[RMDB]
RNA sequence: GGGAACGACUCGAGUAGAGUCGAAAAAUAUUGCAGGCAUCGACUGCAAAGACUAAACACUCCUCAAGACCGAUAGCGAACAAGUAGCGUGAGCGAACGCUGAAAAGCACCCCACGAAGGGAGGUGCAAGUUUAUAGGGAUUCGUCCCUAUAAACUUAAAAGAAACAACAACAACAAC
Reactivity to 2A3 in 0.01 (KOAc 150mM, MgCl2 10mM, bicine 150mM(pH8.5), 24C), signal-to-noise 9, nucleotides 027 to 126: a000u150a070u030u030g000c000a010g020g000c060a160u100c160g110a070c040u000g000c000a010a020a010g020a000c030u100a030a110a030c050a020c040u040c010c010u060c050a080a040g040a070c010c020g070a060u080a070g070c030g030a050a050c040a150a030g070u070a000g070c020g010u040g050a030g050c060g030a030a010c010g010c030u050g020a050a070a000a000g000c010a000c000c000c000c000a060c080g120a090a100g090g010g020a110g010g000u010g010c010
Reactivity to DMS in 0.01 (KOAc 150mM, MgCl2 10mM, bicine 150mM(pH8.5), 24C), signal-to-noise 9, nucleotides 027 to 126: a100u040a050u010u000g000c010a010g000g010c080a160u040c170g010a070c000u000g000c010a010a030a090g000a240c080u010a060a090a110c130a080c080u010c010c010u000c070a070a070g010a100c060c040g000a080u010a050g010c050g010a070a080c140a060a080g000u020a050g010c010g010u020g000a120g010c100g010a070a060c040g010c020u010g000a050a040a070a110g000c010a020c010c000c000c010a090c150g020a100a100g000g000g000a040g010g010u000g010c010
Structure probing data (2A3 and DMS) for a 177-nucleotide construct. 2A3 adducts were read by reverse transcription with SuperScript II with manganese. The data come from the RNA Mapping Database (RMDB), libraries RFM100 and RFMREP. DMS adducts were read by reverse transcription with MarathonRT. Conditions: 150 mM KOAc, 10 mM MgCl2 and 150 mM bicine (pH 8.5), 24 C. In probing experiments dimethyl sulfate is read out at A N1 and C N3, which are open when not base-paired.